[RMDB]
RNA sequence: GGGAACGACUCGAGUAGAGUCGAAAAUAAAACAAGAGGCUACUGAAAAGAUGCUUAAGGUACCUAAAGAUAGCGAUGAGUACUAUAAGUACAAAAUACUCAGAGAGACAGCUAAGUUAAUCAUGAAAUCGUACGUUAUUUUCGAAUAACGUACGAUAAAAGAAACAACAACAACAAC
Reactivity to 2A3 in 0.01 (KOAc 150mM, MgCl2 10mM, bicine 150mM(pH8.5), 24C), signal-to-noise 1, nucleotides 027 to 126: u020a000a070a000a010c020a060a000g050a030g140g000c020u070a030c030u090g030a030a030a010a070g060a040u040g010c000u040u030a030a050g040g000u010a010c000c030u040a090a090a070g090a060u060a040g080c040g070a080u020g040a000g040u010a030c020u010a030u000a140a010g010u000a030c010a010a200a010a000u040a000c020u000c070a010g010a010g000a010g040a030c040a060g020c010u030a080a000g020u070u030a140a080u060c040a030u070g050a110a190
Reactivity to DMS in 0.01 (KOAc 150mM, MgCl2 10mM, bicine 150mM(pH8.5), 24C), signal-to-noise 3, nucleotides 027 to 126: u000a100a070a090a080c110a080a120g000a120g000g010c040u000a170c040u010g000a060a040a180a150g020a130u000g000c040u010u010a060a300g000g000u000a020c020c040u010a010a100a170g000a120u000a040g010c040g010a110u010g010a130g000u000a000c020u000a080u000a020a040g020u000a050c120a040a080a060a130u000a050c110u010c010a090g000a120g000a080g000a070c120a020g000c050u010a040a050g010u000u000a060a110u000c050a100u000g010a090a070